[RMDB]
RNA sequence: GGGAACGACUCGAGUAGAGUCGAAAACACGUCCACCAGCUUAAUCUGGAUGGAGGGUUUGGCCCCCAGGAAGAUGGAAUCUAUGGCCAGGUCGCACAGAACCCUGCACUUUUCCUUGACCACUGGAGGUAUAAUAUGAGUUCGCUCAUAUUAUACCAAAAGAAACAACAACAACAAC
Reactivity to DMS in 0.01 (KOAc 150mM, MgCl2 10mM, bicine 150mM(pH8.5), 24C), signal-to-noise 9, nucleotides 027 to 126: c030a090c050g000u000c000c010a040c010c010a020g000c270u010u010a130a110u020c010u000g000g010a140u000g000g010a130g010g010g010u000u010u000g010g010c030c010c020c050c050a060g000g010a060a080g010a090u000g010g000a070a200u000c080u000a080u000g010g010c070c050a050g010g010u000c060g010c100a070c120a120g000a080a100c080c020c020u000g010c040a080c070u000u000u000u000c010c010u000u000g000a160c130c100a090c040u000g000g000a300
Reactivity to 2A3 in 0.01 (KOAc 150mM, MgCl2 10mM, bicine 150mM(pH8.5), 24C), signal-to-noise 9, nucleotides 027 to 126: c060a010c030g200u000c000c000a010c010c010a010g030c040u180u270a100a100u240c000u010g040g030a130u010g020g010a050g020g030g000u040u030u080g090g010c020c000c010c010c020a010g080g030a050a050g070a050u110g020g030a070a050u020c040u100a130u160g030g000c020c000a010g030g010u050c030g000c040a080c010a120g050a050a040c020c010c000u030g010c030a050c030u060u040u040u040c010c000u060u080g100a100c030c030a060c080u010g010g020a030

Structure probing data (DMS and 2A3) for a 177-nucleotide construct. For 2A3, 18,388 sequencing reads were counted. Reactivities are rounded to 0.1 and cut off at 0 and 3. For 2A3 the reverse transcriptase was SuperScript II with manganese. For DMS, 18,984 sequencing reads were counted.